Annotation
Chemical mapping of a 177-nucleotide RNA with 2A3 and DMS. For 2A3, 30,301 sequencing reads were counted. Reactivities are given for positions 27 through 126. Conditions: 150 mM KOAc, 10 mM MgCl2 and 150 mM bicine (pH 8.5), 24 C.

[RMDB]
RNA sequence: GGGAACGACUCGAGUAGAGUCGAAAAGAUAUGGACUCAGGCAACAGCUGUAUGUCGGAAACGACAUCACAGACAUGCCUGGGUCCUAAGUCAAACCAAUUAGGUGUCUUCGGACACCUAAUUGGAACAAUCCUAUUAACUUCGGUUAAUAGGAUUGAAAAGAAACAACAACAACAAC
Reactivity to 2A3 in 0.01 (KOAc 150mM, MgCl2 10mM, bicine 150mM(pH8.5), 24C), signal-to-noise 7, nucleotides 027 to 126: g000a000u020a010u050g000g000a000c010u000c010a000g010g000c010a040a060c080a300g080c020u010g010u000a010u000g000u000c000g010g000a020a010a000c000g010a000c000a010u040c090a010c000a020g300a300c090a100u020g000c000c000u000g000g010g000u000c000c000u000a000a000g000u000c000a020a030a120c000c000a000a000u000u000a000g020g000u000g020u000c010u030u090c300g130g000a000c010a000c000c000u000a000a000u000u000g000g000a000a000
Reactivity to DMS in 0.01 (KOAc 150mM, MgCl2 10mM, bicine 150mM(pH8.5), 24C), signal-to-noise 8, nucleotides 027 to 126: g000a020u000a190u010g000g010a010c000u000c000a010g000g000c000a030a120c300a160g020c000u000g000u000a010u000g010u000c000g000g000a040a050a080c000g010a010c000a010u000c230a000c000a000g010a120c130a150u000g000c010c000u000g010g000g010u000c000c000u000a000a040g000u000c010a120a140a240c000c000a000a010u000u000a000g000g010u000g010u000c000u000u000c230g020g000a010c000a000c000c000u000a000a000u000u000g000g010a080a090

For DMS the reverse transcriptase was MarathonRT. It was measured as part of the RMDB library TTRDEL.